An RNA of 177 nucleotides, treated with 2A3 and DMS and read out base by base.
RNA sequence: GGGAACGACUCGAGUAGAGUCGAAAAGCUAGCAAGUGGUGCUGAUGCGCGCUAAGGCACCACAGCCACCGAUGACCUGUAAGGUGGCAAACAGGUCAGCUAAGAAAAGCGCGCACGCGAAAGCGGAAGUGCUCGUAUAUUUCGAUAUACGAGCACUAAAAGAAACAACAACAACAAC
Reactivity to 2A3 in 0.01 (KOAc 150mM, MgCl2 10mM, bicine 150mM(pH8.5), 24C), signal-to-noise 7, nucleotides 027 to 126: g050c050u090a010g050c060a270a050g000u000g000g000u000g010c030u060g000a010u140g010c000g000c000g000c000u020a020a010g000g010c000a010c000c000a000c000a000g000c000c010a050c000c020g100a130u110g030a050c010c000u030g020u050a060a020g050g010u060g050g000c020a010a010a000c030a010g010g060u060c020a020g020c060u110a120a050g100a110a120a020a010g010c000g000c000g020c000a010c000g030c000g040a090a020a030g000c010g010g040a070
Reactivity to DMS in 0.01 (KOAc 150mM, MgCl2 10mM, bicine 150mM(pH8.5), 24C), signal-to-noise 4, nucleotides 027 to 126: g020c060u010a060g020c080a120a080g000u000g000g010u000g010c010u000g000a120u010g020c000g000c000g010c010u000a160a280g020g000c000a020c020c010a010c000a040g020c010c040a180c030c000g000a170u020g000a030c030c000u000g000u020a100a150g000g020u010g000g000c060a040a070a070c110a050g000g000u000c020a030g000c110u020a150a160g000a060a090a060a020g000c000g000c000g000c010a060c000g010c000g000a070a050a170g000c010g000g000a110
For 2A3, 12,633 sequencing reads were counted.
The RNA was probed in 150 mM KOAc, 10 mM MgCl2 and 150 mM bicine (pH 8.5) at 24 C.
The DMS profile rests on 10,092 reads.